An RNA of 207 nucleotides, treated with 2A3 and DMS and read out base by base. Values cover nucleotides 27 to 156.
[RMDB]
RNA sequence: GGGAACGACUCGAGUAGAGUCGAAAAAAGGCAUUCGUGCCUUAGGAUCCUAAGUCCUCGGUAGCUCCUGUGUUCUCGAGGAUCGUUUCGGAAACGAAACGGGAGAGAAUAGAGGAGCUAUAAUCGAGGAUAUGGAAAGCACUACCUUCGGGUAGUGAAGUGGAAUAUAGUUCGCUAUAUUCCACUUAAAAGAAACAACAACAACAAC
Reactivity to 2A3 in 0.01 (KOAc 150mM, MgCl2 10mM, bicine 150mM(pH8.5), 24C), signal-to-noise 5, nucleotides 027 to 156: a000a010g010g000c030a020u110u140c270g120u080g000c000c010u010u010a100g030g060a090u030c000c010u030a100a040g020u010c000c000u010c010g010g000u000a000g010c010u010c000c010u130g040u020g000u180u000c000u000c000g050a300g010g010a000u010c000g000u000u000u000c010g020g020a070a080a060c020g000a000a000a010c000g000g000g000a020g000a000g010a000a010u040a010g220a010g060g000a000g000c000u000a000u000a000a010u060c000g000a000g010g000a000u000a000u000g010g020a040a060a020g080c020a000c000u030a010c000c000u030u060c240g080g000g000u000a000g000u000g010
Reactivity to DMS in 0.01 (KOAc 150mM, MgCl2 10mM, bicine 150mM(pH8.5), 24C), signal-to-noise 6, nucleotides 027 to 156: a040a010g010g030c000a090u000u010c280g040u000g020c000c000u000u010a050g020g010a150u010c010c010u000a090a200g010u000c010c000u000c000g020g030u000a050g000c010u000c000c000u000g010u010g010u000u010c000u000c010g020a130g010g000a030u000c010g010u000u000u000c010g020g000a230a160a300c020g010a000a010a020c000g000g010g000a100g020a030g000a040a020u000a060g000a030g010g010a020g010c000u000a000u000a040a090u000c010g000a040g030g010a010u000a040u010g010g000a080a140a160g000c000a020c000u000a010c000c020u000u000c300g050g020g020u000a010g030u000g010